[RMDB]
The record gives the reactivity of an RNA of 177 nucleotides to 2A3 and DMS.
The DMS profile rests on 86,308 reads.
It was measured as part of the RMDB library OK2TRN.
2A3 adducts were read by reverse transcription with SuperScript II with manganese.
RNA sequence: GGGAACGACUCGAGUAGAGUCGAAAAUCUGUUGACAAGUAAUCGUUAAGUCGAUGUCGGACAACGGUUGCGGCAACAGAAGUCAGUUGGCCUCAAGUCCGACAUGGACUAUUGCUAGAACUGAUCACUACUGCUUAGUAUUCGUACUGAGCAGUAGAAAAGAAACAACAACAACAAC
Reactivity to 2A3 in 0.01 (KOAc 150mM, MgCl2 10mM, bicine 150mM(pH8.5), 24C), signal-to-noise 9, nucleotides 027 to 126: u010c010u020g030u040u030g040a030c030a070a030g010u010a030a020u040c030g020u040u110a070a000g000u000c050g070a020u020g020u040c010g010g000a000c000a040a020c060g030g000u020u020g010c000g000g000c000a030a010c010a090g110a070a010g050u010c020a020g000u030u060g030g070c000c000u030c070a080a030g000u000c000c000g010a030c020a020u030g040g000a000c000u010a060u030u100g010c010u010a010g010a030a010c010u010g010a030u040c010a000
Reactivity to DMS in 0.01 (KOAc 150mM, MgCl2 10mM, bicine 150mM(pH8.5), 24C), signal-to-noise 9, nucleotides 027 to 126: u000c010u000g010u000u000g010a110c100a080a070g010u000a030a050u000c180g010u000u000a090a060g020u000c000g010a070u000g010u000c050g010g000a020c010a080a140c190g010g020u000u000g010c100g000g000c010a040a040c080a080g010a100a110g010u000c060a050g020u000u000g000g000c000c060u000c120a080a140g000u000c000c000g000a060c100a010u000g000g010a010c000u000a050u000u000g000c020u000a100g010a060a030c020u000g000a060u000c140a180